[RMDB]
RNA sequence: GGGAACGACUCGAGUAGAGUCGAAAAGAAAUCUUCUUCAAUGUAGCCGGCCAGUUGAACAAGGAAGUUCUCGAUCCCGGUGCUGACCGCCAAAUCCAUCAUGUUUUCAACACUGAUGAACGGAACGCGCAUGGCCAUCAUUCGUGAUGGCCAUGCGAAAAGAAACAACAACAACAAC
Reactivity to DMS in 0.01 (KOAc 150mM, MgCl2 10mM, bicine 150mM(pH8.5), 24C), signal-to-noise 1, nucleotides 027 to 126: g050a000a020a040u050c000u010u000c150u000u000c000a050a100u000g070u000a300g000c000c050g010g000c000c000a110g010u000u000g000a000a000c220a060a160g000g000a010a230g040u000u000c000u000c020g060a070u010c070c000c000g020g020u000g070c000u000g000a280c010c050g020c120c060a070a090a100u010c140c000a000u010c000a000u000g020u000u000u090u040c160a020a040c100a040c150u000g000a000u000g070a010a270c060g000g000a230a180c070g000
Reactivity to 2A3 in 0.01 (KOAc 150mM, MgCl2 10mM, bicine 150mM(pH8.5), 24C), signal-to-noise 2, nucleotides 027 to 126: g120a000a090a000u050c010u050u000c000u000u050c000a030a060u090g060u090a030g000c000c000g030g000c000c050a040g000u080u070g090a040a050c070a070a080g130g090a120a000g090u070u000c050u000c050g040a050u000c060c000c020g000g000u100g000c070u070g020a060c010c010g000c020c040a120a050a000u000c070c000a020u050c010a070u140g070u130u010u070u160c170a120a090c040a000c080u010g000a020u050g030a010a040c060g000g040a070a000c050g000